[RMDB]
RNA sequence: GGGAACGACUCGAGUAGAGUCGAAAAAAGAAAUCAAAAAAGAUUUCUGAGACAAAGACGCUUCACAAUGUGCGGCAAAGAAACAUUGUUUAUGCAAAGGCACUUCGCAAUGUGUGCUCAAACAUUGACUACCGUCCACCGUUCGCGGUGGACGGAAUCAAAUAGUCUGGUUCGCCAGACUAUUUGAAAAAGAAACAACAACAACAAC
Reactivity to DMS in 0.01 (KOAc 150mM, MgCl2 10mM, bicine 150mM(pH8.5), 24C), signal-to-noise 2, nucleotides 027 to 156: a090a080g000a020a040a010u000c010a010a020a160a190a230a210g020a000u010u000u010c000u000g000a130g010a130c060a120a120a140g000a060c020g000c010u000u010c100a100c020a030a020u030g040u010g020c010g020g000c020a160a070a070g040a060a020a010c030a040u000u000g010u010u010u000a000u020g010c040a030a260a110g000g000c010a020c020u000u010c160g010c090a200a090u020g040u000g000u000g000c020u000c050a050a210a010c040a020u000u000g000a190c080u010a110c010c000g030u000c020c010a020c020c000g000u000u000c280g020c020g030g060u000g000g010a010c000g000g010a010a080
Reactivity to 2A3 in 0.01 (KOAc 150mM, MgCl2 10mM, bicine 150mM(pH8.5), 24C), signal-to-noise 2, nucleotides 027 to 156: a000a020g020a030a010a000u040c070a080a100a270a210a050a060g000a000u000u000u010c010u010g030a050g010a030c080a010a140a020g070a030c020g000c020u000u000c010a000c000a010a040u010g000u000g010c020g050g050c050a170a000a040g080a020a060a000c020a010u000u020g030u030u090u080a080u100g030c050a050a080a080g100g000c020a000c030u120u080c080g040c110a080a080u080g010u010g030u010g050c080u080c120a070a110a030c030a040u040u100g040a070c020u080a130c030c000g000u020c000c000a010c010c000g030u050u070c240g000c030g080g010u000g010g000a000c000g000g000a000a000
The record gives the reactivity of an RNA of 207 nucleotides to DMS and 2A3.
For DMS the reverse transcriptase was MarathonRT.
For DMS, 3,604 sequencing reads were counted.
For 2A3 the reverse transcriptase was SuperScript II with manganese.
Conditions: 150 mM KOAc, 10 mM MgCl2 and 150 mM bicine (pH 8.5), 24 C.